Chemical mapping of a 207-nucleotide RNA with 2A3 and DMS.
Reactivities are given for positions 27 through 156.
2A3 adducts were read by reverse transcription with SuperScript II with manganese.
As a SHAPE reagent, 2A3 marks flexible, mostly unpaired nucleotides at the ribose 2'-OH.
[RMDB]
RNA sequence: GGGAACGACUCGAGUAGAGUCGAAAAGAGAACGUUCGCGUUCUCAAAAACCUUUGUGUCAGAUUAGAUGUGGGAGCGUACUCGGACCCAUUGGGUCCGAGACGCGAAGAACACAUAUUCUCUGACACUCUGGUAAACCACAUAGUUCGCUAUGUGGCACAAUCUUAUUCUUCGGAAUAAGAUUGUGAAAAGAAACAACAACAACAAC
Reactivity to 2A3 in 0.01 (KOAc 150mM, MgCl2 10mM, bicine 150mM(pH8.5), 24C), signal-to-noise 5, nucleotides 027 to 156: g000a000g000a000a010c020g010u070u100c250g020c020g090u010u000c030u010c010a000a010a020a060a040c000c000u000u010u000g000u000g000u000c000a010g000a010u010u050a010g010a050u010g000u000g010g010g020a020g010c000g010u080a120c040u000c010g010g000a000c020c030c110a160u170u300g010g000g000u010c000c010g000a000g000a000c000g000c000g000a040a000g010a000a000c000a000c000a000u000a030u020u010c000u000c000u010g010a010c000a000c000u010c000u000g000g000u050a180a010a000c000c010a000c000a000u010a000g030u050u060c200g010c130u000a000u000g000u000g000g000
Reactivity to DMS in 0.01 (KOAc 150mM, MgCl2 10mM, bicine 150mM(pH8.5), 24C), signal-to-noise 2, nucleotides 027 to 156: g020a020g000a020a020c010g010u010u000c300g020c010g000u020u030c000u000c000a020a050a080a110a040c000c010u000u000u000g010u010g010u000c010a030g000a040u010u000a040g000a030u000g000u010g010g020g010a300g070c040g030u010a090c000u000c000g040g010a040c000c000c030a210u000u000g060g050g030u000c020c030g000a010g000a010c000g010c020g000a010a070g000a130a140c020a010c010a040u000a050u000u000c060u000c010u000g010a040c000a020c010u000c010u010g010g020u000a030a090a190c000c000a010c010a020u010a020g020u000u000c300g030c010u000a020u000g010u000g000g010
The DMS profile rests on 4,547 reads. Conditions: 150 mM KOAc, 10 mM MgCl2 and 150 mM bicine (pH 8.5), 24 C.